[RMDB]
RNA sequence: GGGAACGACUCGAGUAGAGUCGAAAAGAUUUCGUAGUCGUCGUCGAUCAGAUCCGCGUCGGCGAGCGUCGUACGCGUCGCUUCGCCGGCUUCACGCGCGACGCGGACGCACGGAACUUCCAUACUCGGACUGGCCGGCGAGGCGCUGUAACGCUGACGUAAUCUAAGAAUUCGUUCUUAGAUUACGAAAAGAAACAACAACAACAAC
Reactivity to DMS in 0.01 (KOAc 150mM, MgCl2 10mM, bicine 150mM(pH8.5), 24C), signal-to-noise 2, nucleotides 027 to 156: g000a180u000u010u000c060g030u000a120g030u000c010g020u000c040g010u000c030g000a050u010c080a120g010a110u000c040c020g030c100g030u010c050g010g040c010g020a100g010c020g020u000c040g020u000a050c070g000c040g010u000c020g020c010u000u000c020g030c020c050g000g000c020u000u000c050a060c000g010c270g000c000g010a040c060g040c050g000g000a030c000g000c060a090c020g020g030a050a080c060u000u010c030c000a120u010a090c130u000c050g040g010a080c110u010g000g030c000c000g020g010c010g000a050g010g040c010g040c070u030g020u010a070a070c050g030c010u010g010a240
Reactivity to 2A3 in 0.01 (KOAc 150mM, MgCl2 10mM, bicine 150mM(pH8.5), 24C), signal-to-noise 6, nucleotides 027 to 156: g060a050u070u100u090c050g060u100a100g050u060c060g020u010c010g020u010c020g030a090u090c090a080g100a260u020c040c020g020c020g010u020c020g000g020c030g010a010g020c010g010u050c030g030u060a040c050g040c020g060u080c020g000c000u030u030c000g000c000c000g000g000c000u060u070c060a080c000g050c000g010c010g020a010c020g010c010g010g010a010c020g030c030a000c020g040g030a070a050c040u100u040c020c010a090u100a220c030u090c150g050g030a060c060u070g020g010c000c010g010g000c000g000a000g000g000c010g000c020u070g060u080a060a030c050g000c070u030g030a020
Overview: The record gives the reactivity of an RNA of 207 nucleotides to DMS and 2A3. Values cover nucleotides 27 to 156. For DMS, 4,807 sequencing reads were counted. It was measured as part of the RMDB library OK3TST. For 2A3 the reverse transcriptase was SuperScript II with manganese.